[RMDB]
RNA sequence: GGGAACGACUCGAGUAGAGUCGAAAAACCUUUGUGCUAAGACAUGCUGAGUGUUACAGCUAUACUGGGUCCCAUUGGGACCUUAUAGAAGGUGGCUCAGCAACAGCUUAGCACUCUGGUAAACUUCUCGCUAGAGCUUCGGCUCUAGCGAGAAGAACAGUGAGAUGGUGUUCGCACCAUCUCACUGAAAAGAAACAACAACAACAAC
Reactivity to 2A3 in 0.01 (KOAc 150mM, MgCl2 10mM, bicine 150mM(pH8.5), 24C), signal-to-noise 2, nucleotides 027 to 156: a000c000c000u000u000u000g000u000g000c000u030a010a020g010a140c090a220u070g010c000u010g000a010g000u080g080u300u160a050c030a060g020c000u000a000u010a030c220u150g130g000g000u020c010c020c060a150u180u300g010g000g000a000c000c000u010u020a000u000a010g060a100a050g170g060u040g110g000c020u000c000a030g030c040a010a010c010a010g040c000u010u000a000g000c000a000c000u000c000u010g000g000u020a100a070a090c000u020u000c000u000c010g000c000u000a000g000a000g020c030u050u130c300g060g000c010u000c000u000a000g000c000g000a000g000a000a000g010a000a000
The record gives the reactivity of an RNA of 207 nucleotides to 2A3. Reactivities are rounded to 0.1 and cut off at 0 and 3. The RNA was probed in 150 mM KOAc, 10 mM MgCl2 and 150 mM bicine (pH 8.5) at 24 C. For 2A3 the reverse transcriptase was SuperScript II with manganese. The data come from the RNA Mapping Database (RMDB), library RNAMAK.